Structure probing data (2A3) for a 177-nucleotide construct. It was measured as part of the RMDB library OK1LIB.

RNA sequence: GGGAACGACUCGAGUAGAGUCGAAAACUGGACGAUUGUCAAGACGGUGAAUGUCACGAGCAGCGGACAGAAAACCAGUGCCAUGACUAAGUAUACGUGCUUCAGGUCGAUGUCUGCCUGCGGCAUCCCGGUGCUUCGAGUUCGCUCGAAGCACCGGAAAAGAAACAACAACAACAAC
Reactivity to 2A3 in 0.01 (KOAc 150mM, MgCl2 10mM, bicine 150mM(pH8.5), 24C), signal-to-noise 1, nucleotides 027 to 126: c060u050g120g000a000c040g130a120u200u070g000u150c030a010a060g080a050c000g030g190u040g070a230a000u060g040u060c060a100c240g050a050g050c050a020g020c000g000g060a000c000a020g120a100a200a000a000c000c000a050g040u050g000c070c000a010u040g000a000c050u110a030a030g160u130a130u000a110c220g050u040g000c000u000u130c050a000g000g000u020c000g030a010u120g040u060c070u100g000c100c000u000g000c000g020g090c000a020u000c000